[RMDB]
An RNA of 207 nucleotides, treated with 2A3 and read out base by base. Reactivities are rounded to 0.1 and cut off at 0 and 3. Reactivities are given for positions 27 through 156.
RNA sequence: GGGAACGACUCGAGUAGAGUCGAAAAGUCUCCUAGAGAGCUUGGCCGUCGGGCCUUACACCCCGACUUGCUGAGUUUCUGUAGGAGAGUCCCUUUCCCAGCCAGAGGUGGCUGGUCAAACAAUACCAAAACUCUUGCUAGUUCGCUAGCAAGAGAACAUUCCUAUGCACUUCGGUGCAUAGGAAUGAAAAGAAACAACAACAACAAC
Reactivity to 2A3 in 0.01 (KOAc 150mM, MgCl2 10mM, bicine 150mM(pH8.5), 24C), signal-to-noise 1, nucleotides 027 to 156: g010u000c000u000c010c000u060a050g000a000g000a010g160c000u000u020g000g030c000c010g000u000c010g010g010g000c020c000u030u060a090c070a050c030c000c000c000g000a020c000u080u230g010c010u040g010a020g000u050u300u070c020u050g130u000a000g000g000a000g000a000g010u000c000c000c010u000u060u010c000c000c020a000g000c000c000a010g000a020g050g000u000g000g030c000u130g030g030u230c030a000a000a040c040a070a010u010a000c000c000a020a020a060a100c010u020c010u010u000g010c010u000a000g020u050u090c180g030c090u010a000g000c000a000a000g000a000g000a000a000